[RMDB]
RNA sequence: GGGAACGACUCGAGUAGAGUCGAAAAGUGGCUAAUCACCAUAGCUUGACCAUAACACUGACUGGAGGGUAUUGAGUGAUAGACGAGAGGCCACUACAUCUAGUGGUCUCAAAGAUUAUUCUCACAAGUGGUUUGGGAAUUUCGAUUCCCAAACCACAAAAGAAACAACAACAACAAC
Reactivity to DMS in 0.01 (KOAc 150mM, MgCl2 10mM, bicine 150mM(pH8.5), 24C), signal-to-noise 1, nucleotides 027 to 126: g020u000g000g000c000u090a010a080u000c060a300c300c010a080u000a070g000c150u000u030g000a300c090c010a110u060a010a110c080a090c070u000g000a090c030u000g000g090a300g000g050g000u000a000u000u070g000a010g000u000g000a000u000a140g000a160c170g000a250g000a000g000g040c000c000a030c000u000a000c300a090u000c300u040a000g000u000g000g000u000c000u000c000a000a000a120g000a030u000u000a000u000u000c010u000c000a000c240a090a170
Reactivity to 2A3 in 0.01 (KOAc 150mM, MgCl2 10mM, bicine 150mM(pH8.5), 24C), signal-to-noise 2, nucleotides 027 to 126: g200u100g010g000c040u040a000a070u000c010a010c040c000a010u000a000g140c110u110u220g080a180c000c000a040u070a040a020c000a000c100u000g250a000c020u000g000g000a000g000g020g000u060a060u000u150g040a020g010u290g000a090u120a040g040a000c080g000a000g000a000g220g090c000c000a000c000u050a010c000a090u300c300u240a000g000u000g000g000u000c000u000c000a000a000a000g000a000u080u020a000u200u000c090u000c000a020c000a050a300
Chemical mapping of a 177-nucleotide RNA with DMS and 2A3. For 2A3 the reverse transcriptase was SuperScript II with manganese. The RNA was probed in 150 mM KOAc, 10 mM MgCl2 and 150 mM bicine (pH 8.5) at 24 C.